Conditions: 150 mM KOAc, 10 mM MgCl2 and 150 mM bicine (pH 8.5), 24 C. Structure probing data (2A3) for a 207-nucleotide construct. 2A3 adducts were read by reverse transcription with SuperScript II with manganese.
RNA sequence: GGGAACGACUCGAGUAGAGUCGAAAAAACAAACAUCAAAUCGCAUAGCAAAGAGUCAAAAAAAUAGAGAGCAUUGCGAGACCUACCAAGGGUGAAGAGAUACCAUCCAAGGAGCUGAAGAGAAAUCGAGAGCUCACGGCGUUCGCGCCGUGAGCAAGAUAAGGUUAGGCUUCGGCCUAACCUUAUCAAAAGAAACAACAACAACAAC
Reactivity to 2A3 in 0.01 (KOAc 150mM, MgCl2 10mM, bicine 150mM(pH8.5), 24C), signal-to-noise 2, nucleotides 027 to 156: a020a000c100a020a100a010c020a080u140c050a110a100a010u060c050g020c040a060u060a120g030c040a080a040a050g050a080g090u090c100a140a140a060a090a030a000a000u230a000g100a020g020a010g020c040a020u010u060g000c010g010a030g010a030c010c020u080a150c020c050a050a040g070g020g000u050g020a110a030g090a020g010a050u030a110c030c000a020u000c010c010a000a020g020g000a040g030c030u070g030a090a000g050a020g030a060a060a080u220c070g020a040g000a010g210c000u000c000a000c020g000g030c030g000u040u070c300g000c000g000c130c050g020u000g010a000g000c000a000a010